Structure probing data (2A3 and DMS) for a 177-nucleotide construct.

[RMDB]
RNA sequence: GGGAACGACUCGAGUAGAGUCGAAAACAUUCAUGUCCUUUGGCAUUCUGCCUUCACCUUCUCCUGCAGGGAGCUCCAGGCUCCAACAGCUCACUGCCACUGCGGAGAGCUUGGGUUUGGUACAGCCCGUGGUCCUAAAGUUCGCUUUAGGACCACGAAAAGAAACAACAACAACAAC
Reactivity to 2A3 in 0.01 (KOAc 150mM, MgCl2 10mM, bicine 150mM(pH8.5), 24C), signal-to-noise 2, nucleotides 027 to 126: c020a060u100u190c070a060u130g060u040c000c010u090u040u010g010g010c030a070u120u000c060u100g000c010c000u040u040c070a110c020c010u070u030c010u010c030c010u060g030c040a040g000g030g050a010g000c010u040c060c030a070g120g000c030u040c030c020a040a040c030a030g020c010u050c040a100c050u060g020c020c010a140c070u070g000c010g010g040a080g010a000g060c030u020u050g000g000g040u050u060u040g030g010u070a060c060a040g030c040c020
Reactivity to DMS in 0.01 (KOAc 150mM, MgCl2 10mM, bicine 150mM(pH8.5), 24C), signal-to-noise 2, nucleotides 027 to 126: c130a100u010u000c080a060u000g020u000c020c040u000u020u000g010g020c050a070u000u030c140u000g000c020c020u000u000c090a070c040c020u010u000c010u000c000c020u030g020c060a090g020g000g000a060g010c070u010c070c100a110g010g040c000u000c020c050a080a110c170a060g000c020u000c060a100c090u000g010c050c170a230c110u010g010c020g000g000a100g000a020g000c080u000u000g000g020g010u010u000u000g000g030u010a060c210a090g040c030c030

Values are in units of 0.01, from 0 to 300, in steps of 10. Conditions: 150 mM KOAc, 10 mM MgCl2 and 150 mM bicine (pH 8.5), 24 C. 2A3 adducts were read by reverse transcription with SuperScript II with manganese. It was measured as part of the RMDB library OK2TST.